[RMDB]
RNA sequence: GGGAACGACUCGAGUAGAGUCGAAAAAGCACACAAACAGCCCUAGCGGCCUCUGCUGGGCUCAGAGGGAAGAUGGCAGGGGUGGUCCUGGCUGGAAGAGGUCCCAACCUCUGGUUGGGUGGAGUUCCUGUUAUAUGCACUUCGGUGCAUAUAACAGAAAAGAAACAACAACAACAAC
Reactivity to 2A3 in 0.01 (KOAc 150mM, MgCl2 10mM, bicine 150mM(pH8.5), 24C), signal-to-noise 2, nucleotides 027 to 126: a000g110c070a090c000a000c030a030a160a030c020a030g000c010c020c010u040a010g000c060g040g020c010c000u030c000u020g010c000u040g000g160g010c010u020c010a080g050a060g110g070g010a000a060g060a070u100g020g020c020a010g000g000g000g040u070g020g040u090c020c030u030g010g000c010u020g020g020a050a030g030a030g040g060u040c000c040c000a000a060c030c020u160c130u140g010g030u030u010g000g030g010u010g010g020a080g010u040u050c010
Reactivity to DMS in 0.01 (KOAc 150mM, MgCl2 10mM, bicine 150mM(pH8.5), 24C), signal-to-noise 4, nucleotides 027 to 126: a080g010c050a030c040a070c060a100a100a190c100a050g000c010c010c060u010a080g020c040g010g000c010c020u010c020u010g010c030u000g010g010g010c120u000c060a070g000a130g020g000g000a100a050g000a160u010g000g000c040a070g000g010g020g020u000g000g000u000c030c080u000g010g030c030u000g000g000a080a050g000a070g000g000u010c050c030c040a060a060c010c010u010c100u000g020g010u010u000g010g000g030u000g010g000a190g000u000u010c030
The record gives the reactivity of an RNA of 177 nucleotides to 2A3 and DMS. The data come from the RNA Mapping Database (RMDB), library OK2TST. The reactions ran in a buffer of 150 mM KOAc, 10 mM MgCl2 and 150 mM bicine (pH 8.5), at 24 C. For DMS, 4,932 sequencing reads were counted. For 2A3, 2,783 sequencing reads were counted.